[RMDB]
Background:
Chemical mapping of a 177-nucleotide RNA with 2A3 and DMS. DMS adducts were read by reverse transcription with MarathonRT.

RNA sequence: GGGAACGACUCGAGUAGAGUCGAAAAGAAAGAAAGAAAUGAUGGCAAUGAUGAUUUUUAAACUUAUUGUUUACCUGAUAAGUAAAUAUGAGGGUGUUCAGUCACUACCUCAUCUGAUGCCAUCUAACAGGCAGAAAGAGUUCGCUCUUUCUGCCUGAAAAGAAACAACAACAACAAC
Reactivity to 2A3 in 0.01 (KOAc 150mM, MgCl2 10mM, bicine 150mM(pH8.5), 24C), signal-to-noise 4, nucleotides 027 to 126: g040a000a100a000g080a010a060a000g140a020a140a020u200g000a000u010g000g030c050a020a030u050g020a020u030g030a100u070u020u010u140u210a090a130a010c000u000u000a030u090u110g050u080u080u030a080c010c020u040g020a030u040a170a000g040u010a000a080a000u050a020u040g040a040g000g070g000u010g010u030u140c080a280g210u070c000a090c030u070a110c030c000u000c000a000u000c000u040g030a050u220g000c000c000a000u000c000u000a020a000
Reactivity to DMS in 0.01 (KOAc 150mM, MgCl2 10mM, bicine 150mM(pH8.5), 24C), signal-to-noise 3, nucleotides 027 to 126: g000a170a080a040g000a090a070a110g000a100a050a070u010g000a000u000g010g000c000a050a170u000g000a010u000g010a010u000u020u030u010u040a010a030a210c010u000u000a010u020u030g020u000u010u000a000c000c010u030g000a170u000a100a250g010u000a000a030a000u000a000u000g000a020g000g000g000u000g020u000u000c300a100g010u000c010a010c000u000a150c180c110u010c000a000u000c010u020g010a300u020g000c000c000a000u000c000u020a100a150